[RMDB]
RNA sequence: GGGAACGACUCGAGUAGAGUCGAAAAACGCGGCACGUACGCGUGCCGCGACAUGUUUGUGAGGUGGAUGUUAGUGCAAUUUAGUGACGUAAAUAUAUUGCACUUACCUUCGCCUUGCAAAUAUAAAGCAUGUCGAGAAUUUCGAUUCUCGACAUGCAAAAGAAACAACAACAACAAC
Reactivity to 2A3 in 0.01 (KOAc 150mM, MgCl2 10mM, bicine 150mM(pH8.5), 24C), signal-to-noise 1, nucleotides 027 to 126: a000c020g070c000g010g070c020a000c020g060u040a040c120g010c010g090u000g000c000c000g000c000g000a010c000a020u030g010u000u010u040g000u000g060a040g000g000u000g000g020a000u020g000u040u030a000g000u000g000c010a010a000u030u080u040a270g050u240g100a130c210g190u230a080a190a020u130a090u130a020u100u020g000c000a000c000u010u000a000c000c000u000u000c050g000c000c000u000u000g000c000a000a010a000u070a000u020a000a090a040

This 177-nucleotide RNA was probed chemically with 2A3. The RNA was probed in 150 mM KOAc, 10 mM MgCl2 and 150 mM bicine (pH 8.5) at 24 C. Values are in units of 0.01, from 0 to 300, in steps of 10. The 2A3 profile rests on 634 reads.